Structure probing data (2A3) for a 207-nucleotide construct.
RNA sequence: GGGAACGACUCGAGUAGAGUCGAAAACUGCUUACGCUAAAGCUGCGUAAGUCCAGUUGAGCCCUGCGAAACUUCAAUGCUAUCUAGAAGCUUUAGCGGGUAAUUUUUGAUAGCUUAGAUUAAAGAAUUGACGAAUCUAUAAUUGAAAUUUAGUCUUAGGAUUAUGAAGGUUCGCCUUCAUAAUCCUAAAAGAAACAACAACAACAAC
Reactivity to 2A3 in 0.01 (KOAc 150mM, MgCl2 10mM, bicine 150mM(pH8.5), 24C), signal-to-noise 2, nucleotides 027 to 156: c000u000g000c000u000u000a000c010g010c040u120a250a130a170g130c180u100g000c000g000u000a010a000g020u040c060c040a000g010u010u020g040a030g010c000c000c020u030g020c010g020a030a020a020c010u010u020c000a000a020u070g000c000u000a000u030c000u010a020g000a040a010g020c020u090u180u280a030g020c130g030g170g030u130a100a190u040u210u160u230u210g010a000u000a000g000c000u020u300a000g000a010u040u010a040a020a000g020a020a040u000u010g010a010c010g000a010a000u000c000u020a030u020a050a020u000u000g020a020a030a000u180u250u120a080g000u000c000u010u000

Source: RMDB library RSTRND, as collected in RNAgym. 2A3 adducts were read by reverse transcription with SuperScript II with manganese. Values cover nucleotides 27 to 156. For 2A3, 1,198 sequencing reads were counted. The RNA was probed in 150 mM KOAc, 10 mM MgCl2 and 150 mM bicine (pH 8.5) at 24 C.